RNA sequence: GGGAACGACUCGAGUAGAGUCGAAAAAUGGGCUUCGGCGGAUAUCUGAGUACUAUUCUGACUCGUACCAUGUUGCUCGGAGCGGGAUUGAGAAGUUGCUUCGGUUGAGGAGUGUGUUCUACGACGACAUUGUUCAUUCCUUCGGGAAUGAACAAUGAAAAGAAACAACAACAACAAC
Reactivity to DMS in 0.01 (KOAc 150mM, MgCl2 10mM, bicine 150mM(pH8.5), 24C), signal-to-noise 3, nucleotides 027 to 126: a060u020g010g010g000c020u000u000c060g010g010c050g030g010a050u010a050u020c070u020g020a070g030u000a130c040u010a100u050u040c060u000g000a020c070u010c100g010u020a080c070c060a070u020g010u020u010g000c020u000c020g010g020a060g010c040g010g000g010a100u010u010g000a120g000a060a130g010u020u010g000c010u010u000c030g000g020u000u000g000a110g010g010a070g010u030g010u010g010u010u010c040u010a070c080g000a090c150g020a240
Reactivity to 2A3 in 0.01 (KOAc 150mM, MgCl2 10mM, bicine 150mM(pH8.5), 24C), signal-to-noise 4, nucleotides 027 to 126: a010u070g060g020g010c040u050u040c000g040g020c010g010g040a070u080a050u080c050u100g020a010g010u040a140c060u080a150u160u110c080u160g070a050c010u010c060g010u030a020c000c020a040u120g050u070u110g090c060u070c060g010g010a020g010c080g020g000g030a100u110u150g040a070g020a190a050g090u110u090g000c020u020u050c000g010g010u030u080g030a060g020g010a060g020u120g020u020g040u050u040c040u070a040c010g040a010c020g000a010
An RNA of 177 nucleotides, treated with DMS and 2A3 and read out base by base. Source: RMDB library OK1LIB, as collected in RNAgym. Conditions: 150 mM KOAc, 10 mM MgCl2 and 150 mM bicine (pH 8.5), 24 C. For 2A3 the reverse transcriptase was SuperScript II with manganese. For DMS, 7,213 sequencing reads were counted. DMS adducts were read by reverse transcription with MarathonRT.